[RMDB]
RNA sequence: GGGAACGACUCGAGUAGAGUCGAAAAAUUAUCUUAUUAGGGAGGCUAAGACUAGAGUUUUAGUCGUCGUUAAUUCCCAAGAUGUCUAUAAGAGUCUUACCAUAGUUGACAUUCCACAGAGUUUGACCACCUGAAGUGUUCGCACUUCAGAAAAGAAACAACAACAACAAC
Reactivity to 2A3 in 0.01 (KOAc 150mM, MgCl2 10mM, bicine 150mM(pH8.5), 24C), signal-to-noise 8, nucleotides 027 to 129: a000u150u100a070u030c030u070u090a080u030u150a050g040g040g030a010g010g020c000u000a020a000g000a010c030u120a080g040a050g250u010u010u020u000a000g000u010c020g080u010c010g040u010u040a060a040u090u020c000c010c020a000a010g040a020u190g100u060c030u000a020u010a060a030g000a000g010u010c000u030u040a040c000c000a030u050a030g040u010u040g040a030c020a040u040u070c030c010a100c050a070g060a050g060u020u050u080g080a080c020c010a030c010
Reactivity to DMS in 0.01 (KOAc 150mM, MgCl2 10mM, bicine 150mM(pH8.5), 24C), signal-to-noise 7, nucleotides 027 to 129: a080u050u040a070u010c120u030u030a050u030u040a090g000g010g000a070g000g000c000u000a000a000g020a030c000u000a130g010a160g020u000u000u000u000a000g020u010c010g000u020c030g000u010u010a030a060u020u010c020c020c010a110a060g000a000u000g030u000c050u040a030u020a050a240g030a040g010u010c020u000u000a190c000c000a060u000a060g000u010u010g020a020c050a090u020u020c030c060a030c070a090g010a070g010u030u040u000g000a100c070c070a100c190

The record gives the reactivity of an RNA of 170 nucleotides to 2A3 and DMS.
The DMS profile rests on 43,072 reads.
Values cover nucleotides 27 to 129.